[RMDB]
RNA sequence: GGGAACGACUCGAGUAGAGUCGAAAAUCCUGGCUGAGGCGCCUAUAACUCAGUAGCAACAUCCCAGGACGUCAUCGCUUAUAGGCUGCUCCGUUCACCAGAGCUCACUGGUGUUCGGCUAAGAUUAAAGAGCUCGCCUCUCGCACCCUGACCUUCGGUAAUACACAAACUUCGGUUUGUGUAUUACAAAAGAAACAACAACAACAAC
Reactivity to 2A3 in 0.01 (KOAc 150mM, MgCl2 10mM, bicine 150mM(pH8.5), 24C), signal-to-noise 2, nucleotides 027 to 156: u040c010c010u020g040g050c010u010g010a010g000g030c080g010c060c020u010a010u010a020a010c010u000c030a010g040u090a030g050c070a060a080c030a210u180c010c000c010a010g030g040a050c060g100u110c070a110u160c070g060c160u070u000a010u010a030g020g000c010u000g010c000u000c000c000g000u010u000c000a010c000c000a010g010a050g030c030u010c040a190c030u000g000g000u020g000u000u000c000g010g000c000u010a020a000g020a070u130u260a150a140a010g030a010g000c010u010c050g050c020c010u040c000u020c060g020c030a090c020c020c000u040g070a090c020c000u040u040c020g000